Structure probing data (2A3 and DMS) for a 177-nucleotide construct.
The RNA was probed in 150 mM KOAc, 10 mM MgCl2 and 150 mM bicine (pH 8.5) at 24 C.
For 2A3, 8,852 sequencing reads were counted.

RNA sequence: GGGAACGACUCGAGUAGAGUCGAAAAAACACUGUGUAGGAUAGGUGGGAGGCUUUGAAGUGUGGACGGCAGUCUGCAUGGAGCCGACCUUGAAAUACCACCCUUUAAUGAAGAAAAACAAAGCCAACGUUAAGUCUAGAUUCGUCUAGACUUAACGAAAAGAAACAACAACAACAAC
Reactivity to 2A3 in 0.01 (KOAc 150mM, MgCl2 10mM, bicine 150mM(pH8.5), 24C), signal-to-noise 5, nucleotides 027 to 126: a000a000c150a010c040u150g020u030g020u080a020g020g050a030u010a040g020g030u040g070g070g040a120g000g010c010u270u200u050g040a050a020g010u010g000u010g020g000a010c010g010g060c030a040g010u010c010u000g000c020a010u030g020g020a010g000c010c000g010a020c010c000u000u000g010a010a030a000u050a020c000c000a020c010c020c010u060u100u100a170a130u200g090a070a120g100a070a130a010a000a010c040a020a120a000g030c020c010a040a010
Reactivity to DMS in 0.01 (KOAc 150mM, MgCl2 10mM, bicine 150mM(pH8.5), 24C), signal-to-noise 8, nucleotides 027 to 126: a050a040c080a070c110u000g010u010g030u000a040g010g020a110u000a040g010g010u000g010g000g010a200g010g010c000u000u000u010g000a100a090g000u000g010u000g010g010a020c000g020g010c250a120g010u000c010u000g000c010a010u000g000g000a020g020c000c010g010a080c120c030u000u000g000a080a060a080u010a060c010c010a050c010c010c030u000u010u000a070a100u000g010a090a070g010a050a050a050a070a090c130a060a090a090g010c050c060a100a190